[RMDB]
RNA sequence: GGGAACGACUCGAGUAGAGUCGAAAAAGCAGGACCGCGUUACGACGCGGUCGUGCAGCAAUGAGUAGAAGCGGUCAAAUUUGGUGUCGAGUUCCAACAAACCAAAUUCGGGCAUUGCUCACUGCAAAAAACUCUCUUUAGUUCGCUAAAGAGAGAACCAAAAGAGCAUGUUCGCAUGCUCUUUUGGAAAAGAAACAACAACAACAAC
Reactivity to DMS in 0.01 (KOAc 150mM, MgCl2 10mM, bicine 150mM(pH8.5), 24C), signal-to-noise 1, nucleotides 027 to 156: a060g030c000a060g000g000a030c000c000g030c010g020u010u000a210c290g000a160c020g010c000g000g030u000c000g000u010g010c000a210g020c000a000a040u010g010a080g020u000a030g030a070a070g010c080g000g010u020c020a050a040a070u000u000u000g010g020u020g020u030c040g000a240g040u000u010c150c060a130a100c090a090a080a060c010c010a000a040a030u000u000c010g020g010g020c040a170u000u000g010c000u010c010a010c050u000g010c030a010a030a040a070a020a100c000u000c010u010c010u000u010u000a020g020u000u030c300g020c020u010a010a000a010g000a030g010a010g000a020a070
Reactivity to 2A3 in 0.01 (KOAc 150mM, MgCl2 10mM, bicine 150mM(pH8.5), 24C), signal-to-noise 3, nucleotides 027 to 156: a000g030c020a020g020g020a000c000c000g030c010g050u020u020a180c300g010a000c020g040c020g000g000u000c000g010u000g000c000a000g000c010a010a050u020g000a020g030u040a010g010a150a000g050c060g070g010u070c040a030a000a030u000u000u010g020g020u040g080u110c110g080a100g070u140u150c070c010a050a030c020a070a150a040c010c010a000a000a000u030u040c020g040g000g000c020a030u030u040g000c000u000c010a000c000u010g000c000a000a000a000a010a030a120c000u000c000u000c000u000u000u000a020g030u050u040c210g000c100u010a000a000a000g000a000g010a000g000a020a030

Notes
Conditions: 150 mM KOAc, 10 mM MgCl2 and 150 mM bicine (pH 8.5), 24 C. The record gives the reactivity of an RNA of 207 nucleotides to DMS and 2A3. In probing experiments dimethyl sulfate is read out at A N1 and C N3, which are open when not base-paired. The data come from the RNA Mapping Database (RMDB), library M2RFPK. For DMS, 2,496 sequencing reads were counted.